Notes
This 177-nucleotide RNA was probed chemically with 2A3 and DMS. 2A3 adducts were read by reverse transcription with SuperScript II with manganese. Values cover nucleotides 27 to 126. It was measured as part of the RMDB library OK1LIB. For 2A3, 20,453 sequencing reads were counted. The RNA was probed in 150 mM KOAc, 10 mM MgCl2 and 150 mM bicine (pH 8.5) at 24 C.
RNA sequence: GGGAACGACUCGAGUAGAGUCGAAAAACGGGCAGUGGCGAUGGCAACGCGGCAGCCGCAGGGUCGACUUCUUCGCAGCCGCAACAGACGGGCCACGGGCAAAGAGGGGAACUCGUUCUGUUGGAAGGUAGUGAUAUGAUUUCGAUCAUAUCACUACAAAAGAAACAACAACAACAAC
Reactivity to 2A3 in 0.01 (KOAc 150mM, MgCl2 10mM, bicine 150mM(pH8.5), 24C), signal-to-noise 9, nucleotides 027 to 126: a000c050g010g030g000c060a060g030u040g050g010c040g080a160u050g040g020c050a070a050c060g000c010g040g000c010a020g050c050c020g000c030a020g040g000g030u080c030g070a100c020u090u040c010u050u040c060g000c040a040g010c010c010g010c000a010a020c020a020g080a010c020g010g030g000c000c030a020c030g000g020g000c100a140a120a010g060a080g030g010g000g010a040a060c040u020c090g050u110u010c030u050g020u020u010g030g020a070a030g100
Reactivity to DMS in 0.01 (KOAc 150mM, MgCl2 10mM, bicine 150mM(pH8.5), 24C), signal-to-noise 5, nucleotides 027 to 126: a110c120g000g010g010c090a060g020u010g000g000c070g000a090u010g000g010c030a110a100c140g000c040g000g000c050a100g000c070c060g020c090a100g000g000g010u010c110g000a130c110u020u020c030u000u000c080g000c080a140g020c020c010g000c050a050a080c080a070g000a070c040g000g000g030c020c000a040c080g010g000g000c080a050a070a100g010a080g000g000g020g000a070a120c060u000c040g010u010u010c070u000g000u010u000g000g010a120a080g010